[RMDB]
RNA sequence: GGGAACGACUCGAGUAGAGUCGAAAAGAUUACGUGUCGUUGUGGAGUCGAUACUACGCACGAGAUUCCAAGGUCUCUGUAGUACGUCCGCUGGUGACGUCUUUGGAGUCACGUUCGAUAUACGAAAGGUAUCAACUAGGUUCGCCUAGUUGAUACCAAAAGAAACAACAACAACAAC
Reactivity to 2A3 in 0.01 (KOAc 150mM, MgCl2 10mM, bicine 150mM(pH8.5), 24C), signal-to-noise 4, nucleotides 027 to 126: g050a020u160u100a040c080g020u030g010u020c010g030u040u000g050u050g050g010a050g010u080c030g000a010u000a050c050u010a010c010g000c010a010c020g010a010g000a010u090u020c080c030a070a020g090g000u030c050u000c050u130g100u070a030g070u060a020c030g020u020c000c060g070c150u160g130g070u190g010a010c010g070u050c050u070u030u110g010g010a000g020u000c010a010c040g010u040u000c020g010a010u010a000u010a170c070g050a030a050a060
Reactivity to DMS in 0.01 (KOAc 150mM, MgCl2 10mM, bicine 150mM(pH8.5), 24C), signal-to-noise 3, nucleotides 027 to 126: g020a110u000u030a080c140g000u020g000u000c000g000u000u000g030u050g000g000a110g010u020c010g020a140u010a040c070u010a040c000g010c100a060c080g000a050g010a000u000u000c080c100a050a030g000g000u000c050u020c070u000g020u010a030g010u010a000c030g000u010c020c020g020c080u040g000g020u020g000a030c030g000u010c020u000u030u000g000g000a080g000u000c000a030c000g000u000u000c000g000a070u000a050u030a130c060g020a110a100a150
The record gives the reactivity of an RNA of 177 nucleotides to 2A3 and DMS. The RNA was probed in 150 mM KOAc, 10 mM MgCl2 and 150 mM bicine (pH 8.5) at 24 C. The DMS profile rests on 6,159 reads. For 2A3 the reverse transcriptase was SuperScript II with manganese.